[RMDB]
An RNA of 207 nucleotides, treated with DMS and 2A3 and read out base by base. DMS adducts were read by reverse transcription with MarathonRT. 2A3 adducts were read by reverse transcription with SuperScript II with manganese. Source: RMDB library OK3TST, as collected in RNAgym.
RNA sequence: GGGAACGACUCGAGUAGAGUCGAAAAUGUGUCACUGUCUCUGUGUGUGUCUCUGUCUCUCACACAUGUGCUGUGCCAUCCCCUGAGGAUGGUAGUUUGGGAUCUGACAUGGCCCUGCUGGCUAAGGAGACAGUGGCUGGGUCGGGAAGGGAGGCGACCUAUACCAAGGGUUCGCCCUUGGUAUAGGAAAAGAAACAACAACAACAAC
Reactivity to DMS in 0.01 (KOAc 150mM, MgCl2 10mM, bicine 150mM(pH8.5), 24C), signal-to-noise 1, nucleotides 027 to 156: u000g030u000g010u000c020a020c010u030g000u010c000u000c030u000g030u040g000u000g010u010g020u000c010u040c030u010g010u010c070u000c010u000c030a060c030a020c020a040u010g050u030g040c020u000g000u000g000c000c010a050u000c000c020c040c130u020g000a150g030g000a040u010g010g030u000a000g000u000u000u000g000g000g000a070u000c070u020g010a120c130a110u000g030g000c020c020c010u000g000c130u000g010g010c040u000a110a250g010g020a030g010a010c000a010g000u000g000g010c010u010g010g020g000u000c120g000g030g000a180a080g000g000g000a130g000g010c070g020a140
Reactivity to 2A3 in 0.01 (KOAc 150mM, MgCl2 10mM, bicine 150mM(pH8.5), 24C), signal-to-noise 5, nucleotides 027 to 156: u080g010u000g010u010c000a000c010u000g020u010c000u000c010u010g020u000g000u000g010u000g040u050c020u050c070u180g180u110c040u030c010u050c100a000c000a000c020a030u080g050u070g080c020u050g030u100g020c000c000a000u000c000c000c000c100u220g070a200g050g000a010u000g020g030u020a060g040u060u250u130g080g020g020a180u020c040u080g070a110c090a170u240g070g000c000c000c000u040g040c040u060g020g030c020u050a140a070g040g000a000g000a000c000a000g000u000g020g000c000u000g000g020g070u260c210g020g010g070a090a070g020g000g000a030g090g000c070g040a030